[RMDB]
RNA sequence: GGGAACGACUCGAGUAGAGUCGAAAAUAGACAUUCGUGUCUAAUCAUGCGUACUACCAUUUGGACUUGGACCGUAGCCUACCCACCAUCCUCCCAAAUAGGAGGAUGAGGGCUACGCUAGUCCAAAUGGUAUCGCCUACAAUAGCUUCGGCUAUAAAUGGUUGUGCUUUUUCGAAAGCACAACCAUAAAAGAAACAACAACAACAAC
Reactivity to 2A3 in 0.01 (KOAc 150mM, MgCl2 10mM, bicine 150mM(pH8.5), 24C), signal-to-noise 2, nucleotides 027 to 156: u100a000g000a000c010a000u120u210c270g060u060g080u070c020u000a070a140u250c150a060u230g010c000g070u070a090c050u000a000c030c000a000u000u000u000g020g040a070c070u040u100g160g080a220c120c130g000u000a010g000c020c000u030a110c080c060c040a090c000c000a030u000c000c000u080c000c000c030a130a300a130u300a110g000g000a000g000g000a010u000g000a010g000g000g000c010u000a000c000g020c010u000a030g000u000c020c000a000a000a000u000g000g030u000a020u020c000g000c000c020u120a150c070a170a170u030a050g000c000u000u090c140g140g020c000u000a000u210a140a270